[RMDB]
The record gives the reactivity of an RNA of 177 nucleotides to DMS and 2A3. Conditions: 150 mM KOAc, 10 mM MgCl2 and 150 mM bicine (pH 8.5), 24 C. Values cover nucleotides 27 to 126. The 2A3 profile rests on 4,437 reads. Source: RMDB library OK1LIB, as collected in RNAgym.

RNA sequence: GGGAACGACUCGAGUAGAGUCGAAAAACAAACAAACAAAAGAACAAAAGAGUCGUGCAAAGGACAGGCUCGACAGAUGCACGACAAAGCGAGCCAUGAAAAGACAGCGGGAAAACCGCUGUCGAAACGACAUGUUCGACUUCGGUCGAGCAUGUCGAAAAGAAACAACAACAACAAC
Reactivity to DMS in 0.01 (KOAc 150mM, MgCl2 10mM, bicine 150mM(pH8.5), 24C), signal-to-noise 2, nucleotides 027 to 126: a020c040a130a170a070c150a120a130a070c200a080a030a080a060g000a050a060c130a060a060a050a170g000a090g000u010c000g020u000g010c070a060a140a110g000g000a050c190a010g000g000c000u000c010g000a100c060a060g000a090u000g000c000a060c020g010a040c000a010a060a110g000c000g000a020g000c040c000a090u050g050a100a060a020a140g000a000c000a010g000c000g000g000g010a080a060a040a180c010c030g000c000u000g010u000c000g000a010a040a100
Reactivity to 2A3 in 0.01 (KOAc 150mM, MgCl2 10mM, bicine 150mM(pH8.5), 24C), signal-to-noise 3, nucleotides 027 to 126: a000c090a050a060a020c130a120a080a000c060a050a230a020a090g200a170a030c070a110a140a010a050g110a010g020u000c010g000u020g000c000a000a090a070g090g080a060c040a050g010g000c020u000c000g010a000c010a010g140a020u040g000c000a010c010g000a010c010a020a030a000g010c000g000a000g000c000c000a050u140g030a020a010a010a010g000a000c000a000g000c010g000g000g090a030a170a050a000c010c000g000c000u000g000u000c010g000a000a000a000